RNA sequence: GGGAACGACUCGAGUAGAGUCGAAAAUGCCACCAGACACGAACAUGAGGUUGGGCAGACUGCUCGUGAAAGGGCUUUCCCAUCUCGAGGAGAUAGGCAGCGCAGGUGAGGGCUCCAUCUGGGGGCCACCUCGUUUAAGCUUCGGCUUAAACGAGGUAAAAGAAACAACAACAACAAC
Reactivity to 2A3 in 0.01 (KOAc 150mM, MgCl2 10mM, bicine 150mM(pH8.5), 24C), signal-to-noise 1, nucleotides 027 to 126: u110g060c010c000a080c060c060a050g000a070c020a000c050g090a090a010c020a110u240g110a060g090g030u110u160g090g040g090c020a000g030a070c050u060g030c010u020c010g040u020g100a090a000a020g030g000g010c000u030u040u000c030c000c000a000u040c030u060c050g120a100g050g010a080g030a150u100a070g000g020c060a020g000c040g050c060a000g020g060u100g020a100g010g020g040c000u010c010c000a180u210c140u110g070g000g040g000g010c030c030
Reactivity to DMS in 0.01 (KOAc 150mM, MgCl2 10mM, bicine 150mM(pH8.5), 24C), signal-to-noise 2, nucleotides 027 to 126: u000g000c010c000a100c090c080a090g030a300c040a070c040g000a060a070c040a080u000g000a090g000g010u010u000g000g020g030c190a090g010a190c100u010g020c010u000c030g040u020g000a050a200a120g000g000g000c040u000u000u000c010c000c020a140u000c050u000c030g000a070g010g000a050g000a080u000a040g000g010c040a040g010c040g000c070a040g000g010u000g000a130g010g010g010c020u010c020c020a170u000c120u000g020g000g010g000g010c070c120